[RMDB]
RNA sequence: GGGAACGACUCGAGUAGAGUCGAAAACCCAGACACAUUCACACUGGGCCAAGAGCAGCUGCCAUUGCAGAUUCGAGUCACGUCCUUUUUUCCUUCCUUCUCCUUCUUGGAGUUACAACAGAAGCUGUCAAUGCACGCUAUUCGUAGCGUGCAUUGAAAAAGAAACAACAACAACAAC
Reactivity to DMS in 0.01 (KOAc 150mM, MgCl2 10mM, bicine 150mM(pH8.5), 24C), signal-to-noise 3, nucleotides 027 to 126: c020c000c000a090g000a120c230a080c100a110u020u000c130a110c150a060c060u000g000g000g000c020c060a110a100g000a100g010c100a040g020c050u010g040c040c120a030u010u010g000c060a050g000a080u010u000c030g040a040g000u040c000a090c060g010u000c000c000u000u000u010u000u000u000c030c020u010u000c050c040u000u040c000u000c020c030u000u000c110u000u030g000g030a090g000u050u020a060c170a080a070c140a070g010a060a020g010c130u050g020
Reactivity to 2A3 in 0.01 (KOAc 150mM, MgCl2 10mM, bicine 150mM(pH8.5), 24C), signal-to-noise 6, nucleotides 027 to 126: c000c000c000a000g050a000c090a010c030a100u160u140c060a020c000a000c050u040g020g040g040c010c030a060a000g030a030g030c060a020g010c000u020g010c010c050a150u080u180g000c030a010g040a100u050u050c010g030a010g030u000c020a020c070g040u040c000c000u000u050u010u020u030u060c010c000u040u040c010c010u060u060c010u010c000c000u060u220c020u040u140g020g000a010g000u070u090a090c060a160a000c000a060g030a080a020g050c060u060g040